[RMDB]
Structure probing data (DMS and 2A3) for a 207-nucleotide construct.
The reactions ran in a buffer of 150 mM KOAc, 10 mM MgCl2 and 150 mM bicine (pH 8.5), at 24 C.
Source: RMDB library OK3TST, as collected in RNAgym.
RNA sequence: GGGAACGACUCGAGUAGAGUCGAAAACAAGGUAUUGACAUAUUCAUUACCUCAAAAGGUUGCCUUUUGUAUAUGUCUUAUGAGAAUACUUAAAAUAUACUUUCUUUACACCUGUCAAGUGUAAAUGACAUUAUAGUCACUUUGAUAUAAACUAGGAAUUUACUACGUCGUUCGCGACGUAGUAAAUAAAAGAAACAACAACAACAAC
Reactivity to DMS in 0.01 (KOAc 150mM, MgCl2 10mM, bicine 150mM(pH8.5), 24C), signal-to-noise 1, nucleotides 027 to 156: c070a110a040g030g040u000a010u000u010g010a030c100a270u000a070u000u000c000a040u000u000a010c010c010u020c050a070a140a150a170g010g000u020u010g010c010c070u020u000u000u000g000u010a130u000a000u000g010u010c020u010u000a120u010g010a040g010a130a080u000a000c040u000u020a130a090a150a130u000a070u010a010c010u000u020u000c000u000u010u010a020c000a020c020c020u030g020u010c270a130a070g010u000g000u010a020a010a050u000g050a030c000a080u000u000a220u000a150g010u000c050a040c130u000u000u000g010a060u000a070u000a020a020a150c070u000a070g010g010a140
Reactivity to 2A3 in 0.01 (KOAc 150mM, MgCl2 10mM, bicine 150mM(pH8.5), 24C), signal-to-noise 3, nucleotides 027 to 156: c070a000a080g000g010u050a020u100u060g030a000c040a020u080a050u110u090c010a020u070u070a050c020c010u100c050a050a090a060a040g020g010u080u110g060c020c000u100u050u090u050g020u000a020u010a010u030g010u000c000u090u110a120u110g050a070g090a080a040u070a110c020u090u150a120a080a100a000u140a030u020a040c020u040u120u020c000u010u030u040a020c020a020c010c010u150g110u300c090a070a040g010u020g000u040a030a030a050u100g020a020c000a040u070u280a070u160a120g030u010c000a010c070u090u060u040g050a000u040a020u080a130a150a030c050u040a080g090g000a050